Chemical mapping of a 177-nucleotide RNA with DMS and 2A3. Values are in units of 0.01, from 0 to 300, in steps of 10. DMS adducts were read by reverse transcription with MarathonRT. The RNA was probed in 150 mM KOAc, 10 mM MgCl2 and 150 mM bicine (pH 8.5) at 24 C.
[RMDB]
RNA sequence: GGGAACGACUCGAGUAGAGUCGAAAAACGGCUUACGAGCCGAAUGUCGUGAACGGCUGUCCAGCCGGGUCGCGACACAAGACAGAACACCGUGUCACGGGAACAACGUGACACUUCAGGGCGUUAACUUGACAUUAGGGUUCGCCCUAAUGUCAAGAAAAGAAACAACAACAACAAC
Reactivity to DMS in 0.01 (KOAc 150mM, MgCl2 10mM, bicine 150mM(pH8.5), 24C), signal-to-noise 4, nucleotides 027 to 126: a170c040g000g000c000u000u000a120c170g010a050g020c000c010g000a100a110u010g000u010c000g010u010g000a030a050c000g000g000c010u000g020u030c240c220a120g000c000c000g000g000g020u000c000g020c000g010a020c000a010c210a130a050g020a110c150a080g030a110a050c080a080c150c040g000u000g000u020c000a020c000g000g000g010a110a110c300a080a080c000g000u000g020a000c000a000c010u010u010c100a170g000g000g020c060g010u000u020a030a150
Reactivity to 2A3 in 0.01 (KOAc 150mM, MgCl2 10mM, bicine 150mM(pH8.5), 24C), signal-to-noise 5, nucleotides 027 to 126: a000c000g000g030c020u110u090a070c260g060a060g000c010c000g020a020a080u060g000u000c010g020u000g000a010a000c000g010g000c000u020g190u170c110c080a000g000c000c030g030g030g030u010c000g000c010g040a010c000a000c000a000a020g110a010c030a060g150a070a040c050a020c070c040g000u000g000u000c000a010c010g000g020g060a160a040c070a050a020c110g000u000g020a000c000a000c000u010u010c010a020g030g020g000c090g000u070u120a070a080